[RMDB]
RNA sequence: GGGAACGACUCGAGUAGAGUCGAAAAGGAGGUUUCCUCUUGUCUCCCUCCCAGGGCACCGACGGCCCCGCCCGAGGAGGCGGAAGCGGAGGAGGACGCGGCCCCGGCGGCGGAAGAGGCGGCCCCCCUGAGGUCUCUCUUUCGAGAGAGACCUCAGAAAAGAAACAACAACAACAAC
Reactivity to 2A3 in 0.01 (KOAc 150mM, MgCl2 10mM, bicine 150mM(pH8.5), 24C), signal-to-noise 1, nucleotides 027 to 126: g070g000a050g010g000u000u080u050c010c040u000c000u010u170g060u000c060u110c000c010c000u000c000c000c010a040g030g010g000c060a100c070c150g090a140c010g120g020c000c000c000c000g000c000c000c060g180a260g110g010a130g000g030c020g010g050a130a060g000c120g010g030a070g000g040a030g000g000a070c040g000c010g090g000c020c000c000c110g150g000c080g030g020c050g050g010a040a020g030a020g000g020c020g000g010c010c000c000c000c000